[RMDB]
RNA sequence: GGGAACGACUCGAGUAGAGUCGAAAAGAUAUGGAAGGGUCGAGAGACGGUCGGAAACGACCGAAUCUCAGUGAGACCUUCCUAAGUCAAACAGAUCUAAGUCUCGUUCGCGAGACUUAGAUCUGAACAUAACUCGUGUCUUCGGACACGAGUUAUGAAAAGAAACAACAACAACAAC
Reactivity to DMS in 0.01 (KOAc 150mM, MgCl2 10mM, bicine 150mM(pH8.5), 24C), signal-to-noise 3, nucleotides 027 to 126: g020a060u010a300u000g000g000a040a000g020g000g000u010c070g000a060g020a020g000a270c010g000g000u000c000g000g000a090a040a210c000g010a010c020c000g000a050a080u000c000u000c010a130g010u020g020a170g000a140c000c010u010u000c000c000u010a030a130g010u000c020a100a140a280c030a010g000a000u000c000u000a000a000g010u000c000u000c000g000u000u030c200g040c000g000a010g010a020c000u000u000a020g000a010u000c000u000g000a040a170
Reactivity to 2A3 in 0.01 (KOAc 150mM, MgCl2 10mM, bicine 150mM(pH8.5), 24C), signal-to-noise 1, nucleotides 027 to 126: g010a020u080a040u190g000g040a000a030g060g010g090u120c050g030a010g000a020g010a070c010g040g000u000c030g050g020a020a070a040c000g000a000c010c010g000a040a020u000c000u010c010a020g010u180g100a150g010a050c000c000u020u000c000c000u020a080a020g030u020c030a000a000a160c000a030g000a000u000c000u010a000a000g010u010c010u000c010g090u040u080c300g060c000g130a000g020a000c010u010u000a000g000a020u020c000u000g020a000a020